Chemical mapping of a 177-nucleotide RNA with 2A3 and DMS. The reactions ran in a buffer of 150 mM KOAc, 10 mM MgCl2 and 150 mM bicine (pH 8.5), at 24 C.
[RMDB]
RNA sequence: GGGAACGACUCGAGUAGAGUCGAAAACUCAUGCGCCCACGGUUGCAGGAGGCUUUGGCGCAGUUGAAAAGUUCACUUGCAAUUUUUCACUCCGGCAGCGAGCAGCUGUGUAGUUUGUUCAAUCAAACCAUUAGCAGGAGUUCGCUCCUGCUAAUGGAAAAGAAACAACAACAACAAC
Reactivity to 2A3 in 0.01 (KOAc 150mM, MgCl2 10mM, bicine 150mM(pH8.5), 24C), signal-to-noise 2, nucleotides 027 to 126: c000u020c030a020u200g010c000g060c000c110c050a070c040g030g020u070u130g000c030a020g020g220a090g000g060c010u180u120u130g030g030c000g000c030a020g020u070u100g090a040a050a000a010g030u050u060c030a040c280u140u270g040c060a040a030u040u020u000u050u050c000a040c010u090c040c020g090g000c020a000g020c000g010a000g060c020a020g000c020u000g010u030g030u080a080g030u060u030u100g040u070u000c070a110a200u010c000a020a080a020
Reactivity to DMS in 0.01 (KOAc 150mM, MgCl2 10mM, bicine 150mM(pH8.5), 24C), signal-to-noise 2, nucleotides 027 to 126: c040u000c040a090u000g020c000g060c030c010c090a130c130g000g000u010u010g010c000a020g000g020a060g000g000c130u030u030u060g000g010c050g050c060a070g000u030u040g000a010a030a000a010g020u000u000c030a210c180u050u040g010c070a030a000u000u000u000u000u000c010a030c030u040c090c000g020g050c030a000g020c060g000a110g000c070a110g010c000u020g030u010g020u060a020g010u010u000u000g000u000u000c210a120a120u040c050a070a080a080
It was measured as part of the RMDB library OK1LIB. For 2A3, 819 sequencing reads were counted. The DMS profile rests on 2,201 reads. For 2A3 the reverse transcriptase was SuperScript II with manganese.